[RMDB]
RNA sequence: GGGAACGACUCGAGUAGAGUCGAAAACACCACACCCGGACAAGUUCAAUUUCUUAACCUACACUGUAUGAUACUGUUCUGGGGCAAAUGAGAUAAUAGGUGAAAGAAGAUUUUAGUUUUUGAGAGAUAGUCUGCUGUUUUUAAUAUAGGUUGGUGCCGCAGCACGUUAAUUCGUUAACGUGCUGCGAAAAGAAACAACAACAACAAC
Reactivity to 2A3 in 0.01 (KOAc 150mM, MgCl2 10mM, bicine 150mM(pH8.5), 24C), signal-to-noise 1, nucleotides 027 to 156: c010a050c010c020a010c000a020c020c000c000g040g000a030c000a050a020g010u060u060c030a060a130u180u070u040c040u010u170a040a020c000c010u050a110c130a060c100u130g000u100a040u100g040a040u050a050c000u020g040u130u000c000u050g000g000g040g020c000a000a100a130u290g030a090g000a170u040a130a040u030a180g000g000u000g060a050a000a070g090a010a010g010a050u060u040u000u040a020g110u020u080u000u090u130g080a070g000a000g000a020u000a060g010u000c030u030g020c000u000g080u050u030u120u120u050a080a150u180a070u020a060g020g030u010u040g060g000u110g020c020